RNA sequence: GGGAACGACUCGAGUAGAGUCGAAAAGGCCCGCUGAGUCUGCGGGUAGGGAGCUGGAGCCGGCUGGUAACAGCCGGCCUAGAGGAAUGGUUGUCACGCACCGUUUGCCGCAAGGCGGGCGGGGCGCCAACUGUUCUACGUUCGCGUAGAACAGUUGAAAAGAAACAACAACAACAAC
Reactivity to DMS in 0.01 (KOAc 150mM, MgCl2 10mM, bicine 150mM(pH8.5), 24C), signal-to-noise 3, nucleotides 027 to 126: g010g020c000c000c000g020c040u000g000a170g020u010c120u010g000c000g000g000g020u000a050g000g000g020a120g000c080u010g000g010a140g020c010c000g000g000c020u000g000g000u050a160a180c000a000g020c010c000g000g000c010c010u010a030g000a070g000g010a080a090u010g000g000u000u020g000u000c160a190c000g000c010a010c000c000g000u000u000u010g010c020c030g000c250a080a130g010g000c000g000g010g010c000g000g000g000g000c000g020c270
Reactivity to 2A3 in 0.01 (KOAc 150mM, MgCl2 10mM, bicine 150mM(pH8.5), 24C), signal-to-noise 2, nucleotides 027 to 126: g120g010c000c020c020g000c020u100g080a160g160u140c120u110g020c000g000g000g000u020a040g020g030g020a170g020c040u050g000g020a020g020c010c000g000g000c000u010g010g020u090a150a070c000a000g000c000c000g000g000c000c000u010a000g010a020g020g060a130a080u140g060g010u040u030g010u060c040a000c040g000c000a010c000c010g000u000u000u010g010c000c000g030c050a060a070g000g000c000g000g000g000c010g000g000g010g000c010g010c010
An RNA of 177 nucleotides, treated with DMS and 2A3 and read out base by base. For DMS the reverse transcriptase was MarathonRT. 2A3 adducts were read by reverse transcription with SuperScript II with manganese. Reactivities are given for positions 27 through 126. Conditions: 150 mM KOAc, 10 mM MgCl2 and 150 mM bicine (pH 8.5), 24 C.